Chemical mapping of a 177-nucleotide RNA with 2A3 and DMS. Reactivities are given for positions 27 through 126. Source: RMDB library OK1LIB, as collected in RNAgym. The RNA was probed in 150 mM KOAc, 10 mM MgCl2 and 150 mM bicine (pH 8.5) at 24 C. DMS adducts were read by reverse transcription with MarathonRT.
RNA sequence: GGGAACGACUCGAGUAGAGUCGAAAAAUGACAGUAGGAAAGUUACGGUGAAGGCAAUAUCUCUGUUAUACAGUCGAAAAUGGGACCUACAAGUUAUCAAUGCCGUGAAUGCCGGUUUCAAUGCCUCAAACAUAGCGUUGUUCGCAACGCUAUGUUUAAAAGAAACAACAACAACAAC
Reactivity to 2A3 in 0.01 (KOAc 150mM, MgCl2 10mM, bicine 150mM(pH8.5), 24C), signal-to-noise 3, nucleotides 027 to 126: a010u080g030a010c000a020g160u250a020g040g000a140a060a070g060u080u030a020c030g000g050u090g080a180a040g030g000c050a080a050u020a050u100c050u000c010u030g020u060u050a110u070a100c010a030g070u010c010g050a050a010a030a050u110g090g000g030a010c000c000u010a030c000a080a020g060u060u040a110u070c020a050a120u020g060c000c000g030u030g030a030a030u210g040c000c000g000g030u000u030u070c080a080a050u080g010c010c010u080c090
Reactivity to DMS in 0.01 (KOAc 150mM, MgCl2 10mM, bicine 150mM(pH8.5), 24C), signal-to-noise 5, nucleotides 027 to 126: a090u040g020a040c050a100g030u020a030g000g000a100a070a080g010u010u010a120c050g010g000u000g020a110a060g020g010c010a030a050u010a100u010c030u000c040u000g010u000u010a100u030a140c100a100g020u010c060g020a030a030a050a050u040g000g000g000a120c020c010u000a070c100a030a070g020u020u010a070u030c110a040a070u010g010c030c020g010u000g010a050a070u020g010c040c040g010g000u000u000u000c050a100a050u010g000c020c000u020c180